[RMDB]
RNA sequence: GGGAACGACUCGAGUAGAGUCGAAAACUCACUACCCACUUAGCCCCUGAGCACGUCUCCCUGAUGCCAUCCCCUGCAGGCAGCCUGGUCUGCGGCUGUGAGACAGGAAGUGGGGCUGUGCUUGGAGAGACAAAGCCUACAGCUGGACCCGGCUCUACGGAUUUAAAUUAUUCGUAAUUUAAAUCCGAAAAGAAACAACAACAACAAC
Reactivity to 2A3 in 0.01 (KOAc 150mM, MgCl2 10mM, bicine 150mM(pH8.5), 24C), signal-to-noise 2, nucleotides 027 to 156: c030u080c040a030c050u130a060c030c000c020a050c070u110u200a010g040c020c000c020c060u030g020a020g020c000a010c090g010u010c000u020c020c020c000u040g060a110u180g020c000c000a060u070c030c000c000c040u020g000c010a020g090g120c000a010g020c000c020u140g060g030u080c030u100g020c010g030g000c000u010g020u040g000a100g030a050c020a020g030g050a020a070g040u060g020g040g000g000c020u010g000u020g030c000u020u040g020g020a090g000a000g000a050c000a020a120a000g020c020c030u070a060c040a030g000c050u040g050g030a080c040c020c000g020g000c070u060c000u090a020
Reactivity to DMS in 0.01 (KOAc 150mM, MgCl2 10mM, bicine 150mM(pH8.5), 24C), signal-to-noise 1, nucleotides 027 to 156: c020u000c040a110c090u000a170c040c010c030a110c060u000u000a100g000c010c010c020c000u000g020a110g000c030a090c080g000u000c020u000c020c010c000u000g000a150u000g010c020c030a150u010c030c000c000c010u010g040c030a130g000g030c020a080g020c070c070u010g000g030u000c050u010g030c060g030g000c020u020g010u030g030a260g020a100c010a050g000g000a070a080g020u000g000g010g040g040c060u010g020u010g040c060u000u000g020g000a130g010a130g000a110c020a100a120a130g000c000c000u000a060c050a120g020c020u000g040g000a140c030c020c030g010g000c020u000c010u000a180
The data come from the RNA Mapping Database (RMDB), library OK3TST.
This 207-nucleotide RNA was probed chemically with 2A3 and DMS.
The DMS profile rests on 2,435 reads.
The RNA was probed in 150 mM KOAc, 10 mM MgCl2 and 150 mM bicine (pH 8.5) at 24 C.
For 2A3, 1,066 sequencing reads were counted.